[RMDB]
RNA sequence: GGGAACGACUCGAGUAGAGUCGAAAAACACAUACAGAGCAACAGUAGAAGAAGUCCUCAAGUAUCUUGGAAAUGGUGACAUUCAGGCAGCUAUUGACAUGCUUGAACUUGAGUACUACACCACUCCCACACCUACAGCGUUCGCGCUGUAGGUGUGAAAAGAAACAACAACAACAAC
Reactivity to 2A3 in 0.01 (KOAc 150mM, MgCl2 10mM, bicine 150mM(pH8.5), 24C), signal-to-noise 2, nucleotides 027 to 126: a010c020a000c000a030u180a040c020a020g110a000g060c050a020a020c020a070g070u060a000g030a140a000g020a020a000g040u050c000c010u000c000a020a020g010u020a080u020c030u050u070g090g070a030a030a030u060g040g020u010g050a020c000a100u090u100c040a050g020g030c070a000g000c040u070a100u140u100g060a040c060a080u040g050c020u000u050g010a030a050c000u010u020g000a000g010u010a010c010u010a010c010a000c000c000a020c010u020c000c020
Reactivity to DMS in 0.01 (KOAc 150mM, MgCl2 10mM, bicine 150mM(pH8.5), 24C), signal-to-noise 1, nucleotides 027 to 126: a050c060a030c180a130u030a060c070a060g040a050g000c070a040a070c060a010g000u000a040g000a120a070g000a080a070g000u000c050c000u000c040a040a010g010u000a050u000c080u010u010g000g000a060a000a050u000g010g020u000g000a150c100a050u000u000c080a050g010g060c000a080g020c020u000a300u000u000g000a080c100a070u010g000c010u020u000g010a010a060c000u000u000g000a060g020u000a060c000u000a060c070a000c010c020a030c040u000c030c080